[RMDB]
RNA sequence: GGGAACGACUCGAGUAGAGUCGAAAAUUUUGAGCUUUCGAGCUCAAAACAACUGGUGUCCCGACCAGGAAUAACAGAUUUACACGAAGUGAAAGAUCGAAAGGGCCACCAUGUUCGCAUGGUGGAAAUUAAGGAUCCUCUUCGGAGGAUCCUUAAUAAAAGAAACAACAACAACAAC
Reactivity to DMS in 0.01 (KOAc 150mM, MgCl2 10mM, bicine 150mM(pH8.5), 24C), signal-to-noise 1, nucleotides 027 to 126: u000u000u010u020g000a030g000c000u000u000u020c270g000a010g010c000u010c000a010a010a060a060c210a160a120c020u000g010g000u000g000u000c000c000c000g010a130c030c000a040g000g010a180a080u020a050a130c250a070g000a050u000u000u000a300c100a090c060g010a090a100g000u000g040a080a110a100g000a020u000c010g000a030a080a100g010g010g000c000c000a010c000c000a010u000g000u000u000c170g000c030a010u010g000g020u000g000g000a000a020

Conditions: 150 mM KOAc, 10 mM MgCl2 and 150 mM bicine (pH 8.5), 24 C. Structure probing data (DMS) for a 177-nucleotide construct. The DMS profile rests on 596 reads. Reactivities are rounded to 0.1 and cut off at 0 and 3.